This 177-nucleotide RNA was probed chemically with 2A3 and DMS.
The RNA was probed in 150 mM KOAc, 10 mM MgCl2 and 150 mM bicine (pH 8.5) at 24 C.
In probing experiments dimethyl sulfate is read out at A N1 and C N3, which are open when not base-paired.
For 2A3, 602 sequencing reads were counted.
For 2A3 the reverse transcriptase was SuperScript II with manganese.
For DMS, 1,139 sequencing reads were counted.

[RMDB]
RNA sequence: GGGAACGACUCGAGUAGAGUCGAAAAGAGGACGUCUUUUGUCCGUGCGGUACCGCCCUCCUUGGUCGGCUCCGCCUACUCGGCGGUCGGCAGUGGAGAGGAAUCAAAAACUAGUCCCAGUUGGCAGCCGCUUUGAAUGGUUCGCCAUUCAAAGCGGAAAAGAAACAACAACAACAAC
Reactivity to 2A3 in 0.01 (KOAc 150mM, MgCl2 10mM, bicine 150mM(pH8.5), 24C), signal-to-noise 1, nucleotides 027 to 126: g110a020g050g040a040c010g020u100c040u090u130u090u110g030u000c040c000g030u010g000c030g020g070u050a070c000c000g000c020c000c000u010c000c010u100u060g010g000u000c000g010g000c040u080c120c000g060c000c010u130a280c110u080c150g020g000c000g000g010u030c000g010g000c010a030g000u030g000g000a060g080a120g000g020a030a100u100c130a010a030a030a000a000c020u030a020g050u020c000c000c000a000g000u000u010g090g000c010a000g050
Reactivity to DMS in 0.01 (KOAc 150mM, MgCl2 10mM, bicine 150mM(pH8.5), 24C), signal-to-noise 1, nucleotides 027 to 126: g010a200g010g000a040c000g010u030c050u000u000u000u020g030u010c010c040g090u010g010c200g030g020u010a010c000c010g010c110c060c000u000c010c000u030u080g000g060u000c000g000g030c030u080c000c040g030c000c000u010a170c200u030c150g000g000c040g000g000u010c030g000g020c080a020g000u020g000g010a010g000a150g000g000a200a080u070c130a010a100a080a020a040c070u000a180g060u000c010c000c000a110g020u000u040g000g010c030a030g000